Description:
This 177-nucleotide RNA was probed chemically with DMS and 2A3. It was measured as part of the RMDB library OK1LIB. The reactions ran in a buffer of 150 mM KOAc, 10 mM MgCl2 and 150 mM bicine (pH 8.5), at 24 C. For 2A3, 3,153 sequencing reads were counted.
[RMDB]
RNA sequence: GGGAACGACUCGAGUAGAGUCGAAAAUAGUGUGGUUGAUUCAGACUAUAAAGGCGAAAUUCAAUUGGUUAUUAGCUCUUCAAUUCCUUGGAGUGCCAGUCCAGGAGACAGGAUUGCUCAAUUAUUACACUGAUGUUAACUUCGGUUAACAUCAGUGAAAAGAAACAACAACAACAAC
Reactivity to DMS in 0.01 (KOAc 150mM, MgCl2 10mM, bicine 150mM(pH8.5), 24C), signal-to-noise 3, nucleotides 027 to 126: u030a070g020u000g020u000g000g010u000u010g010a030u040u000c040a060g030a110c080u000a060u000a060a040a120g010g010c040g030a060a070a140u010u000c080a050a260u060u020g000g010u010u010a080u010u030a180g020c010u010c000u000u000c060a060a080u020u020c070c100u010u010g000g000a030g010u000g000c030c030a080g030u000c000c020a100g000g000a290g000a040c180a090g000g020a070u010u010g040c020u010c100a040a040u010u010a070u010u020a150
Reactivity to 2A3 in 0.01 (KOAc 150mM, MgCl2 10mM, bicine 150mM(pH8.5), 24C), signal-to-noise 5, nucleotides 027 to 126: u120a010g080u050g000u010g100g030u030u120g020a100u110u030c020a020g040a070c020u040a020u090a120a100a030g100g000c070g040a080a070a060u110u040c050a020a110u110u120g030g030u080u130a130u100u060a070g000c010u000c000u070u060c070a080a210u100u020c010c000u040u120g020g020a030g000u070g100c050c010a020g050u020c000c010a030g010g090a050g020a030c040a040g080g030a050u040u070g000c020u000c050a020a180u150u090a050u080u020a070